[RMDB]
RNA sequence: GGGAACGACUCGAGUAGAGUCGAAAACUCAAUGUAGGGAAUAACAUUGAAUUGAUACAAAUACCUUUUUCGGUGUAGGGAAAAACACCGAAUUGAUACAAAUACUUUUCUCAAUGUAGGGAAUAACAAAACAGGCAUCGCUUCGGCGAUGCCUGAACGAAAAUGUAUAGUUCGCUAUACAUUUUCGAAAAGAAACAACAACAACAAC
Reactivity to 2A3 in 0.01 (KOAc 150mM, MgCl2 10mM, bicine 150mM(pH8.5), 24C), signal-to-noise 6, nucleotides 027 to 156: c020u010c000a010a000u030g020u050a070g070g120g120a150a170u120a080a030c010a020u010u030g040a070a050u090u130g050a100u140a210c070a040a130a050u160a090c010c010u010u010u000u010u000c010g000g000u000g000u010a020g000g030g050a100a100a090a050a000c000a000c010c010g000a000a000u020u020g020a010u030a040c020a010a060a020u060a080c030u050u050u040u000c020u000c010a100a160u170g040u090a080g000g000g030a010a060u090a150a050c070a050a070a030a020c000a000g010g000c000a000u000c000g040c040u070u120c220g070g000c000g000a000u010g000c010c000u000g000a000a000
Reactivity to DMS in 0.01 (KOAc 150mM, MgCl2 10mM, bicine 150mM(pH8.5), 24C), signal-to-noise 2, nucleotides 027 to 156: c020u000c030a030a060u010g030u000a060g000g010g030a130a190u010a100a060c010a020u000u000g020a000a070u000u010g020a240u000a120c040a070a180a100u000a040c000c000u000u000u000u000u020c020g000g030u010g040u010a110g040g010g000a090a070a190a140a000c050a010c040c000g030a020a020u000u030g020a080u000a070c050a020a100a070u010a040c020u000u010u000u000c030u000c020a030a070u020g000u000a090g000g000g020a070a050u020a100a110c090a070a090a100a120c020a000g000g000c000a020u000c000g030c020u000u010c300g060g050c000g030a020u000g000c010c000u000g020a000a030